Structure probing data (2A3 and DMS) for a 177-nucleotide construct.
RNA sequence: GGGAACGACUCGAGUAGAGUCGAAAAGCCCCUUAUGUCCAGGGCAACACACAUGCUACAAUGGCCGGUACAAAGGGCUGCGAAACCGUAAGGAGGAGCGAAUCCUUUCAAAGCCGGUCUCAGUUAGAAAAUUAUUAAAAUUCGUUUUAAUAAUUUUAAAAGAAACAACAACAACAAC
Reactivity to 2A3 in 0.01 (KOAc 150mM, MgCl2 10mM, bicine 150mM(pH8.5), 24C), signal-to-noise 3, nucleotides 027 to 126: g000c040c020c030c030u160u250a160u220g060u070c030c050a030g010g000g060c020a110a010c070a000c000a000c000a060u160g050c010u100a060c020a070a140u160g000g000c000c040g000g000u020a010c060a010a020a000g010g020g000c090u070g030c020g040a090a050a030c000c010g020u040a040a080g020g010a000g020g000a030g010c000g030a080a060u130c000c000u000u020u020c040a060a050a030g000c000c000g010g020u010c000u020c000a020g010u030u050a030g040
Reactivity to DMS in 0.01 (KOAc 150mM, MgCl2 10mM, bicine 150mM(pH8.5), 24C), signal-to-noise 3, nucleotides 027 to 126: g000c050c000c000c160u000u040a080u010g010u010c060c070a070g000g000g000c030a120a070c100a030c170a100c220a060u050g010c040u010a050c030a070a070u010g000g020c000c020g020g000u000a140c270a020a000a000g000g000g000c140u050g000c000g010a220a250a010c010c010g010u110a050a060g000g000a070g010g020a300g000c020g000a060a130u010c000c000u000u000u010c150a100a130a220g010c000c000g000g000u000c000u000c100a030g020u000u000a040g000
Description: DMS adducts were read by reverse transcription with MarathonRT. As a SHAPE reagent, 2A3 marks flexible, mostly unpaired nucleotides at the ribose 2'-OH. The reactions ran in a buffer of 150 mM KOAc, 10 mM MgCl2 and 150 mM bicine (pH 8.5), at 24 C. It was measured as part of the RMDB library OK1LIB.